[RMDB]
RNA sequence: GGGAACGACUCGAGUAGAGUCGAAAAACGCGGUGCGUGCUUCCGAACGGCACCGCGACACGCUGCGGUCUGCAGCAUCACAGGUGUUCGGGAGAAAAGACGAUGACGCCAUCGCAGCUACUGCACACGUCUUACCAUGUUUCGACAUGGUAAGACGAAAAGAAACAACAACAACAAC
Reactivity to 2A3 in 0.01 (KOAc 150mM, MgCl2 10mM, bicine 150mM(pH8.5), 24C), signal-to-noise 3, nucleotides 027 to 126: a000c000g000c000g010g010u020g000c040g020u060g100c010u060u000c000c000g000a040a020c010g100g010c030a010c000c010g000c000g020a010c030a030c020g000c020u020g000c010g010g300u180c200u260g000c000a010g040c000a010u060c030a020c020a040g000g140u090g040u090u030c010g010g080g000a000g030a000a110a010a010g110a030c070g020a020u060g030a020c090g080c090c000a010u030c040g000c030a020g030c030u130a080c050u110g050c070a040c000a010
Reactivity to DMS in 0.01 (KOAc 150mM, MgCl2 10mM, bicine 150mM(pH8.5), 24C), signal-to-noise 3, nucleotides 027 to 126: a090c030g020c000g000g030u010g020c000g020u010g000c060u000u010c030c020g020a010a010c040g030g000c030a030c000c000g020c020g000a010c190a050c170g010c010u000g010c000g050g020u000c020u000g030c000a000g030c020a060u000c040a100c150a110g000g010u010g010u000u000c030g050g020g010a020g000a190a050a070a120g010a080c080g030a090u000g020a130c170g010c110c120a020u000c010g010c030a120g010c080u000a010c050u000g030c100a090c300a180